Structure probing data (DMS and 2A3) for a 177-nucleotide construct. DMS adducts were read by reverse transcription with MarathonRT. Source: RMDB library TTRDEL, as collected in RNAgym. 2A3 adducts were read by reverse transcription with SuperScript II with manganese. The reactions ran in a buffer of 150 mM KOAc, 10 mM MgCl2 and 150 mM bicine (pH 8.5), at 24 C. Values cover nucleotides 27 to 126.
RNA sequence: GGGAACGACUCGAGUAGAGUCGAAAAGAUAUGGAUCCGUAUGACAGCAACAGCUCGGAAACGAGACAUGCUGGAGUACCGGAUCCUAAGUCAAAGGUCAUAGUACACUUCGGUGUACUAUGACCAACCUUUUUGUACACUUCGGUGUACAAAAAGGAAAAGAAACAACAACAACAAC
Reactivity to DMS in 0.01 (KOAc 150mM, MgCl2 10mM, bicine 150mM(pH8.5), 24C), signal-to-noise 2, nucleotides 027 to 126: g000a030u010a300u000g000g000a000u000c000c000g000u000a000u000g000a300c000a010g020c000a010a110c300a200g000c000u000c010g010g000a120a100a250c000g000a020g000a030c110a190u000g010c000u000g000g000a300g000u000a040c120c120g040g010a000u010c000c000u000a000a060g000u000c030a050a100a100g000g030u000c000a000u000a000g000u000a000c000a010c000u000u000c210g000g010u000g000u000a000c000u000a000u000g010a000c030c010a010a010
Reactivity to 2A3 in 0.01 (KOAc 150mM, MgCl2 10mM, bicine 150mM(pH8.5), 24C), signal-to-noise 2, nucleotides 027 to 126: g040a020u060a030u180g010g000a000u010c010c020g000u010a000u050g020a030c010a000g000c000a030a110c040a240g050c010u000c020g020g010a070a080a050c010g000a000g060a040c010a060u060g010c000u000g020g010a010g000u000a030c100c080g000g000a000u000c000c000u010a030a020g040u010c070a160a070a070g010g000u000c000a000u000a000g000u000a020c020a000c040u080u170c300g110g000u010g000u030a000c000u000a000u000g000a010c000c020a000a020